Chemical mapping of a 177-nucleotide RNA with DMS.
RNA sequence: GGGAACGACUCGAGUAGAGUCGAAAAUGUCUUCAACUUCAUCGUGGAUGAUCCGGAGAACCAGUCCAUCACAGCCUACCUCAUGGACAACGACUUCCCCUUCCACAAGACGUUGGGCCUGGCGGACAUACUGUUAGGGCUUCGGCCCUAACAGUAUAAAAGAAACAACAACAACAAC
Reactivity to DMS in 0.01 (KOAc 150mM, MgCl2 10mM, bicine 150mM(pH8.5), 24C), signal-to-noise 1, nucleotides 027 to 126: u000g010u000c010u020u000c000a120a130c060u000u020c040a100u010c180g000u000g030g010a020u030g000a070u000c120c240g040g000a050g000a050a080c080c040a110g000u000c030c000a030u000c080a030c100a060g010c040c060u000a100c050c010u000c180a040u000g000g010a070c030a080a180c060g020a100c130u000u000c000c020c030c040u000u000c040c030a060c050a130a110g000a010c070g020u000u000g030g010g020c060c060u000g000g000c030g030g000a060c150
Description
DMS adducts were read by reverse transcription with MarathonRT. Conditions: 150 mM KOAc, 10 mM MgCl2 and 150 mM bicine (pH 8.5), 24 C.